An RNA of 177 nucleotides, treated with 2A3 and DMS and read out base by base. The data come from the RNA Mapping Database (RMDB), libraries RFM100 and RFMREP. The RNA was probed in 150 mM KOAc, 10 mM MgCl2 and 150 mM bicine (pH 8.5) at 24 C.
RNA sequence: GGGAACGACUCGAGUAGAGUCGAAAAAGCCGAAGACCACACCCGGAUCGAGAGUCGGAUUGGUGAUCAGACGAACAUCGCCACCGCCGGGUGCCCAGGUGUCGUAUACGCCACCAAAGAACAUGGCAUUACCCCUACGUUUCGACGUAGGGGUAAUAAAAGAAACAACAACAACAAC
Reactivity to 2A3 in 0.01 (KOAc 150mM, MgCl2 10mM, bicine 150mM(pH8.5), 24C), signal-to-noise 6, nucleotides 027 to 126: a000g030c000c010g020a060a010g050a050c040c010a020c010a000c010c000c000g000g030a090u210c130g060a060g040a060g270u130c050g020g040a090u100u160g010g000u020g000a040u040c060a050g160a290c070g050a100a020c020a040u020c000g000c000c000a010c000c000g000c000c010g000g000g000u000g000c010c000c000a020g010g010u000g010u010c000g010u060a060u040a140c030g000c020c010a030c010c000a040a100a010g050a040a030c060a100u110g020g000c010
Reactivity to DMS in 0.01 (KOAc 150mM, MgCl2 10mM, bicine 150mM(pH8.5), 24C), signal-to-noise 4, nucleotides 027 to 126: a090g020c020c010g000a070a070g010a140c090c100a300c010a000c000c000c000g010g000a100u010c090g000a160g000a130g000u010c030g000g000a080u020u010g010g040u010g000a020u020c080a140g010a180c200g010a060a100c160a020u010c010g010c020c030a020c050c040g000c010c000g000g000g010u000g010c050c010c010a120g010g020u000g000u000c030g000u010a110u040a100c040g000c020c000a010c010c000a050a080a070g010a110a050c150a120u050g000g000c010